[RMDB]
RNA sequence: GGGAACGACUCGAGUAGAGUCGAAAAGAUAUGGAGUGCUCUUGGACCAUGUCACUCGGAAACGAGUGCAUGCUAGAGCCUCCUAAGUCAAAACUGGAAGUCAAGGGUUCGCCCUUGACUUCCAGAACAGUACUUGCAGGUUCGCCUGCAAGUACUGAAAAGAAACAACAACAACAAC
Reactivity to DMS in 0.01 (KOAc 150mM, MgCl2 10mM, bicine 150mM(pH8.5), 24C), signal-to-noise 2, nucleotides 027 to 126: g010a040u000a300u000g010g020a050g000u030g020c000u000c020u000u000g020g010a120c300c000a000u000g000u030c010a010c000u000c000g000g000a060a110a170c000g000a000g010u010g010c000a010u010g010c010u000a010g000a030g020c010c010u000c000c010u010a000a060g010u010c030a070a060a060a190c010u000g000g000a010a020g010u000c000a000a020g010g010g010u000u020c260g010c010c000c010u000u000g000a010c000u000u000c010c000a000g010a020a060
Reactivity to 2A3 in 0.01 (KOAc 150mM, MgCl2 10mM, bicine 150mM(pH8.5), 24C), signal-to-noise 2, nucleotides 027 to 126: g010a000u060a040u150g000g000a010g020u300g040c010u060c080u150u240g190g070a230c110c050a010u030g180u280c030a020c020u010c000g060g030a050a040a020c010g000a000g000u010g000c010a000u020g010c000u000a010g000a000g020c000c010u000c000c000u000a050a000g030u030c030a010a010a150a270c010u000g000g000a000a000g010u000c000a000a000g110g020g060u060u190c220g180c000c000c040u010u010g000a000c000u000u000c010c000a000g000a000a010

This 177-nucleotide RNA was probed chemically with DMS and 2A3. Reactivities are given for positions 27 through 126. Values are in units of 0.01, from 0 to 300, in steps of 10. The reactions ran in a buffer of 150 mM KOAc, 10 mM MgCl2 and 150 mM bicine (pH 8.5), at 24 C.